RNA sequence: GGGAACGACUCGAGUAGAGUCGAAAAUACAAACUAAAGAUAAAGACAAUAAAUCAUCAGGUUCAAGUAGCACAUCAAGUUCAAGUUCAUCAACAAAACCAUCUAAAAAGGAUACAGAAUAUAAAGUAAUCGUAGAACCAUCUUUUCCAGGUGCCUAUAUGCAGUAAAUGUUCGCAUUUACUGCAUAAAAAGAAACAACAACAACAAC
Reactivity to 2A3 in 0.01 (KOAc 150mM, MgCl2 10mM, bicine 150mM(pH8.5), 24C), signal-to-noise 4, nucleotides 027 to 156: u110a000c030a010a110a020c030u180a150a070a030g060a090u110a100a100a020g080a060c050a040a160u090a110a120a050u100c070a010u020c030a040g020g030u050u060c010a050a030g030u030a040g040c020a000c020a060u090c080a090a030g020u100u080c040a060a000g000u040u030c020a140u010c010a040a050c020a030a100a030a050c030c010a020u060c030u120a060a030a050a060a040g040g020a040u080a090c030a030g080a140a050u100a010u050a220a070a000g030u050a040a070u050c030g020u030a040g020a010a000c000c000a020u050c020u030u080u060u010c020c020a010g030g020u030g050c020c020u210a080
Reactivity to DMS in 0.01 (KOAc 150mM, MgCl2 10mM, bicine 150mM(pH8.5), 24C), signal-to-noise 3, nucleotides 027 to 156: u010a130c030a100a060a160c070u010a050a100a100g020a200u000a080a070a110g020a160c080a040a100u030a090a080a080u010c020a110u010c090a050g030g050u000u010c070a040a110g000u010a080g020c030a070c040a070u010c050a030a110g020u000u000c120a030a070g020u000u000c050a090u000c030a060a150c080a050a030a080a090c040c030a020u000c050u010a030a030a080a050a080g020g010a130u000a190c040a060g000a060a160u000a080u000a030a030a140g030u000a110a050u000c040g020u010a080g000a050a080c050c010a060u000c030u010u000u000u000c020c050a090g030g010u000g010c020c030u000a110

Chemical mapping of a 207-nucleotide RNA with 2A3 and DMS.
The DMS profile rests on 3,904 reads.
Source: RMDB library OK3TST, as collected in RNAgym.
The reactions ran in a buffer of 150 mM KOAc, 10 mM MgCl2 and 150 mM bicine (pH 8.5), at 24 C.
Reactivities are given for positions 27 through 156.